[RMDB]
RNA sequence: GGGAACGACUCGAGUAGAGUCGAAAAAGUGCGCAACGUAUCCAUCGUCUCCUUGGCCAUACCGACCGAGACGCCGGCGCUCGCGGCGAUCGCACGCAGCGGCGCGUCGACCAGUUGCGGUGCGUCAGCUCCGCACGGACUUCGGUCCGUGCGGAGCAAAAGAAACAACAACAACAAC
Reactivity to DMS in 0.01 (KOAc 150mM, MgCl2 10mM, bicine 150mM(pH8.5), 24C), signal-to-noise 2, nucleotides 027 to 126: a130g040u010g020c060g000c040a000a060c000g010u030a060u000c300c080a150u010c060g000u010c000u000c010c180u010u010g030g000c060c050a090u010a220c140c020g020a030c010c050g010a110g000a060c010g020c280c010g040g000c000g020c010u010c020g000c030g000g010c010g000a080u000c300g030c220a160c000g010c000a020g010c000g000g000c090g010c000g000u000c000g000a050c170c170a090g000u000u000g000c010g010g000u000g010c070g020u000c090a130
Reactivity to 2A3 in 0.01 (KOAc 150mM, MgCl2 10mM, bicine 150mM(pH8.5), 24C), signal-to-noise 2, nucleotides 027 to 126: a000g150u130g050c040g000c020a030a000c000g000u060a080u060c060c060a160u080c040g020u020c000u000c000c030u090u080g000g000c070c080a090u150a140c050c010g050a030c000c020g000a010g010a020c030g050c020c000g030g000c000g000c000u040c010g000c010g010g000c010g030a100u150c110g050c150a080c050g030c000a010g000c000g050g000c100g000c010g080u020c000g000a090c050c090a100g000u070u060g020c020g020g020u000g000c000g030u070c040a010

Structure probing data (DMS and 2A3) for a 177-nucleotide construct.
The data come from the RNA Mapping Database (RMDB), library OK2TRN.
The 2A3 profile rests on 2,289 reads.
DMS adducts were read by reverse transcription with MarathonRT.